RNA sequence: GGGAACGACUCGAGUAGAGUCGAAAAGAUAUGGAAUGGUUCGUACUUUUGACGUCGACGGUCGGAAACGACCGAGAACGACGAUAAGUACGACCAUUCCUAAGUCAAAUCGCAGUUCGCUGCGAAACUUGCUUGCAGUGUUCGCACUGCAAGCAAGAAAAGAAACAACAACAACAAC
Reactivity to DMS in 0.01 (KOAc 150mM, MgCl2 10mM, bicine 150mM(pH8.5), 24C), signal-to-noise 1, nucleotides 027 to 126: g020a030u020a300u000g020g010a050a000u000g000g000u000u000c020g010u000a020c000u000u000u000u000g050a300c120g020u010c000g000a300c040g020g040u000c000g000g000a090a110a270c020g020a000c000c010g010a010g010a190a210c010g020a000c020g020a020u000a020a040g030u000a030c000g000a020c000c000a000u010u000c000c010u010a090a020g000u000c020a010a110a120u050c010g050c010a000g010u000u010c300g020c020u010g000c020g010a000a030a200
Reactivity to 2A3 in 0.01 (KOAc 150mM, MgCl2 10mM, bicine 150mM(pH8.5), 24C), signal-to-noise 1, nucleotides 027 to 126: g050a010u090a030u180g000g020a040a000u020g030g070u300u230c020g000u030a010c000u000u170u150u230g300a200c030g000u000c010g000a300c020g000g000u000c000g060g010a130a120a120c000g000a010c000c050g000a030g020a020a070c020g020a000c000g020a020u000a050a010g000u010a010c010g000a000c000c000a000u000u020c000c000u020a010a010g010u030c000a000a020a180u040c010g000c010a010g000u110u180c180g000c160u000g030c000g060a040a020a040